Chemical mapping of a 207-nucleotide RNA with 2A3 and DMS. 2A3 adducts were read by reverse transcription with SuperScript II with manganese. The reactions ran in a buffer of 150 mM KOAc, 10 mM MgCl2 and 150 mM bicine (pH 8.5), at 24 C. DMS adducts were read by reverse transcription with MarathonRT. For DMS, 7,358 sequencing reads were counted.
RNA sequence: GGGAACGACUCGAGUAGAGUCGAAAAACGCUUCACUCAAGGACCAGCUCCGCCCUUAUCUUCCCAAGAUCGCCCCUCUUUUGCUUAACAAGAUGGUUUACUCUGACUAUGACAUUGCUGUACUUGACAUGGACGAAUAUGAUGAGGACGUUGCCGAACAGUUUCAGAGAUUCGUCUCUGAAACUGUAAAAGAAACAACAACAACAAC
Reactivity to 2A3 in 0.01 (KOAc 150mM, MgCl2 10mM, bicine 150mM(pH8.5), 24C), signal-to-noise 1, nucleotides 027 to 156: a000c060g020c060u100u070c060a060c100u090c010a000a090g020g010a010c010c040a020g030c020u000c030c010g000c000c010c000u110u100a060u020c060u060u070c000c000c010a010a040g070a170u150c040g040c020c000c010c030u060c000u050u060u080u050g020c020u040u050a100a030c020a070a000g000a070u030g020g000u020u080u120a050c040u020c010u050g060a040c010u030a020u030g000a040c020a070u020u140g010c020u010g010u070a080c030u040u050g010a000c030a040u080g000g020a000c000g060a040a030u140a080u160g030a030u020g000a020g010g000a000c020g030u040u050g020c020c000g030a040
Reactivity to DMS in 0.01 (KOAc 150mM, MgCl2 10mM, bicine 150mM(pH8.5), 24C), signal-to-noise 2, nucleotides 027 to 156: a080c070g030c060u000u000c030a060c040u000c070a040a060g010g010a120c020c060a120g000c040u000c040c030g030c020c030c020u000u000a060u000c050u000u000c020c000c010a100a080g010a070u000c040g010c010c000c010c020u000c030u000u000u000u000g030c030u020u000a100a100c060a050a100g000a110u000g010g000u000u000u000a080c070u000c050u000g010a050c060u000a080u000g030a060c040a120u000u000g020c030u000g010u000a060c040u000u000g010a060c020a050u010g000g020a060c020g020a060a110u020a090u010g010a120u000g010a070g010g020a060c060g010u010u000g010c000c030g000a090